An RNA of 207 nucleotides, treated with 2A3 and read out base by base.
The 2A3 profile rests on 1,195 reads.
The RNA was probed in 150 mM KOAc, 10 mM MgCl2 and 150 mM bicine (pH 8.5) at 24 C.
The data come from the RNA Mapping Database (RMDB), library OK3TST.
RNA sequence: GGGAACGACUCGAGUAGAGUCGAAAACCCAGGAGUCAGCCUUCAGGGUCUUAGGCAGCAUGUGGGCCAUGGGAAAGUGCCGCCUCAUUCAAGUCCCUGUACCCGCCUGACUAGCCAUGGGAAUCUGAGCCUUCACUUCCUUACCGCCAAGAUGGACUACUUAGCUUCACUUCGGUGAAGCUAAGUAAAAAGAAACAACAACAACAAC
Reactivity to 2A3 in 0.01 (KOAc 150mM, MgCl2 10mM, bicine 150mM(pH8.5), 24C), signal-to-noise 2, nucleotides 027 to 156: c000c010c000a020g040g030a040g000u020c020a010g010c000c040u150u140c030a020g030g030g010u010c010u100u080a030g010g000c000a010g000c020a040u020g020u070g050g030g000c060c070a090u130g060g000g070a050a080a040g030u020g040c030c040g040c030c000u060c040a140u200u160c080a070a020g040u030c010c000c000u000g020u050a060c040c030c000g020c040c030u000g030a060c000u000a060g050c030c000a050u080g010g000g010a010a040u000c040u070g030a060g030c040c000u080u050c040a040c000u040u040c000c000u060u060a050c070c010g060c070c010a070a050g100a180u230g000g060a040c000